The record gives the reactivity of an RNA of 207 nucleotides to 2A3. The RNA was probed in 150 mM KOAc, 10 mM MgCl2 and 150 mM bicine (pH 8.5) at 24 C. It was measured as part of the RMDB library ARCHII.

RNA sequence: GGGAACGACUCGAGUAGAGUCGAAAAAUACGGGUGACCCGGUGUUCGCGAGCUCCACCAGAGGUUUUCGAAACACCGUCAUGUAUCUGGUUAGAACUUAGGUCCUUUAAUUCUCGAGGAAAUGAGUUUGAAAUUUAAUGAGAGUCGUUAGUCUCUAGUGUAUGCAUAUCUUCGGAUAUGCAUACACAAAAGAAACAACAACAACAAC
Reactivity to 2A3 in 0.01 (KOAc 150mM, MgCl2 10mM, bicine 150mM(pH8.5), 24C), signal-to-noise 2, nucleotides 027 to 156: a000u150a050c060g050g000g000u040g050a050c030c000c000g020g010u000g000u000u020c040g050c070g020a030g020c020u010c050c020a040c020c020a010g020a020g080g000u040u020u050u030c020g010a040a020a000c020a010c020c000g090u060c030a050u220g150u150a090u000c000u000g060g000u000u040a020g000a020a050c010u020u000a000g000g040u040c000c000u100u110u060a230a130u300u090c030u000c060g000a010g000g000a000a010a030u030g000a000g000u040u030u020g060a050a080a040u250u300u230a070a070u140g020a030g000a010g060u040c050g000u090u050a080g030u030c020u010c010u040a000